[RMDB]
About this RNA: Chemical mapping of a 207-nucleotide RNA with DMS and 2A3.
RNA sequence: GGGAACGACUCGAGUAGAGUCGAAAAUGACGAUGAUAGUGAUAGCGAGAGUGAAGUUGAUAUUAGCGGUAUGCAAGUUAUGGUUAAUGACAACAAUGUAAAUAUCGCAGAUUUGGUGCGUAAAGCCGGCAUUAGCACGCGUAAUGUCAAUUCCGACUGUGGGAUGUUAUUUCGAUAACAUCCCACAAAAAGAAACAACAACAACAAC
Reactivity to DMS in 0.01 (KOAc 150mM, MgCl2 10mM, bicine 150mM(pH8.5), 24C), signal-to-noise 3, nucleotides 027 to 156: u000g040a100c000g020a110u000g010a080u010a070g020u000g000a090u000a100g020c100g000a110g010a080g020u000g020a080a100g020u000u000g000a100u010a070u000u000a160g050c010g010g010u010a040u000g000c090a080a180g010u000u010a090u000g020g020u000u000a070a110u000g010a070c020a030a090c050a070a090u000g010u000a030a080a090u010a070u010c000g020c020a140g000a180u000u010u000g010g020u000g020c020g000u020a050a070a090g030c040c010g010g000c050a070u000u000a040g000c020a030c040g020c250g000u000a060a090u000g010u000c010a030a180u000u000c010c020g000a190c100
Reactivity to 2A3 in 0.01 (KOAc 150mM, MgCl2 10mM, bicine 150mM(pH8.5), 24C), signal-to-noise 3, nucleotides 027 to 156: u060g010a010c050g010a020u060g010a010u050a110g020u000g020a020u030a020g040c050g000a020g030a000g090u110g040a090a030g030u020u040g040a070u030a080u150u130a050g010c040g070g020u080a040u130g060c060a100a040g010u060u060a090u060g080g030u110u150a100a040u100g020a030c010a050a000c040a010a080u090g020u070a040a070a030u090a050u110c030g000c050a010g000a050u110u080u130g030g010u070g010c040g000u030a040a000a030g020c070c060g030g030c000a010u050u000a020g030c040a030c060g000c020g020u010a040a030u010g010u000c000a000a040u040u050c030c050g000a080c100
It was measured as part of the RMDB library OK3TST.
2A3 is a SHAPE reagent: it acylates the 2'-hydroxyl of flexible nucleotides of all four kinds.